[RMDB]
The record gives the reactivity of an RNA of 177 nucleotides to DMS and 2A3. It was measured as part of the RMDB library TTRDES.
RNA sequence: GGGAACGACUCGAGUAGAGUCGAAAAAAAAAGAUAUGGAUCCAUGAUGACCGCAAGCAAGGCUUUCAUAUCGGAAACGAUAUUCUUCAAGCUGAUGACCUUGCGCAAGUGGAUCCUAAGUCAAAAACUUCCUUAAAUCGUUCGCGAUUUAAGGAAGAAAAGAAACAACAACAACAAC
Reactivity to DMS in 0.01 (KOAc 150mM, MgCl2 10mM, bicine 150mM(pH8.5), 24C), signal-to-noise 2, nucleotides 027 to 126: a020a020a000a120a030g000a090u040a300u010g010g010a000u000c000c000a020u000g000a200u020g050a060c300c000g000c020a020a000g000c050a030a090g020g020c020u000u000u000c200a020u010a040u000c000g000g000a040a090a070c000g000a030u000a000u050u010c250u030u010c220a010a040g000c020u000g020a120u020g000a130c300c000u000u000g000c000g080c050a050a190g030u000g000g030a000u000c010c000u000a020a080g020u030c060a020a070a030a120a110
Reactivity to 2A3 in 0.01 (KOAc 150mM, MgCl2 10mM, bicine 150mM(pH8.5), 24C), signal-to-noise 1, nucleotides 027 to 126: a000a000a000a000a000g100a110u170a110u070g000g000a000u000c000c000a000u030g080a150u110g090a160c050c030g040c000a010a000g020c010a090a230g030g010c030u000u130u030c060a000u030a000u000c020g000g040a050a000a000c000g010a000u010a000u150u120c170u270u200c090a050a030g000c010u030g010a300u170g040a100c070c000u000u020g000c040g000c050a300a120g040u000g000g020a010u000c000c000u000a000a000g000u000c060a030a030a000a060a080